[RMDB]
RNA sequence: GGGAACGACUCGAGUAGAGUCGAAAAAGCUGUCAAAACAGGCGUUGCUAUUGAACAGCUGCUUUAUGCGAUCCAACAACUGUAUACUGGGUUCCAGGGAAAGCAAAUCCUUGGCAGUACCAUGUUGAAAGCCCAUCGUUCGCGAUGGGCAAAAGAAACAACAACAACAAC
Reactivity to DMS in 0.01 (KOAc 150mM, MgCl2 10mM, bicine 150mM(pH8.5), 24C), signal-to-noise 3, nucleotides 027 to 129: a050g010c010u000g000u000c010a010a000a010a050c210a080g080g010c090g090u000u000g040c000u010a150u070u000g000a000a000c030a020g030c010u020g000c190u020u080u010a080u060g020c050g020a140u000c000c020a000a140c070a060a000c000u000g040u040a220u000a040c000u070g000g000g100u100u100c040c000a020g090g010g000a000a040a190g080c300a020a030a080u050c020c020u050u000g050g020c000a040g030u050a020c080c000a010u000g020u050u000g040a050a050a190
Reactivity to 2A3 in 0.01 (KOAc 150mM, MgCl2 10mM, bicine 150mM(pH8.5), 24C), signal-to-noise 3, nucleotides 027 to 129: a010g000c020u000g000u000c020a000a020a040a030c040a100g000g090c140g140u170u250g030c030u070a060u020u010g000a010a010c000a020g020c000u010g070c050u100u140u060a140u280g020c020g000a030u020c020c020a000a010c000a000a000c020u000g010u090a130u000a030c020u030g150g000g000u300u050c000c000a020g000g000g040a030a020a030g180c090a070a040a110u010c000c000u000u000g000g000c000a000g010u000a060c010c000a100u170g010u000u000g060a050a030a010
Annotation: Chemical mapping of a 170-nucleotide RNA with DMS and 2A3. It was measured as part of the RMDB library 15KLIB. The DMS profile rests on 8,152 reads. For DMS the reverse transcriptase was MarathonRT.